RNA sequence: GGGAACGACUCGAGUAGAGUCGAAAAGAUAUGGAUUGCACCACGCAGCUUGGAUUUACGUUCGGAAACGAACGUUGUCAGCUGCGGGUGUCAAUCCUAAGUCAAAAGCCGGACUUCGGUCCGGCAAGUUAAGGCUUGAGUUCGCUCAAGCCUUAACAAAAGAAACAACAACAACAAC
Reactivity to 2A3 in 0.01 (KOAc 150mM, MgCl2 10mM, bicine 150mM(pH8.5), 24C), signal-to-noise 1, nucleotides 027 to 126: g040a020u060a030u190g020g000a000u010u020g030c000a000c010c020a300c040g000c000a000g030c030u250u300g170g030a050u300u300u260a000c000g010u010u000c000g050g050a080a100a080c010g020a000a010c000g010u010u010g010u000c000a010g000c000u010g010c000g020g000g010u000g000u050c000a010a000u040c000c000u000a110a000g000u040c030a240a120a030a000g000c000c020g000g000a000c000u090u120c300g050g000u050c000c030g020g000c030a000a000
Reactivity to DMS in 0.01 (KOAc 150mM, MgCl2 10mM, bicine 150mM(pH8.5), 24C), signal-to-noise 1, nucleotides 027 to 126: g000a040u010a300u010g000g010a010u000u000g010c000a020c000c000a220c010g050c000a000g000c000u000u010g010g010a020u000u000u000a000c010g020u010u020c010g000g020a100a110a280c000g000a000a020c000g010u010u000g000u000c000a050g000c010u010g000c000g010g000g030u000g000u000c010a010a000u010c010c010u000a030a080g000u000c030a090a120a190a220g020c000c000g000g000a060c010u020u000c260g010g020u000c010c010g000g010c000a000a010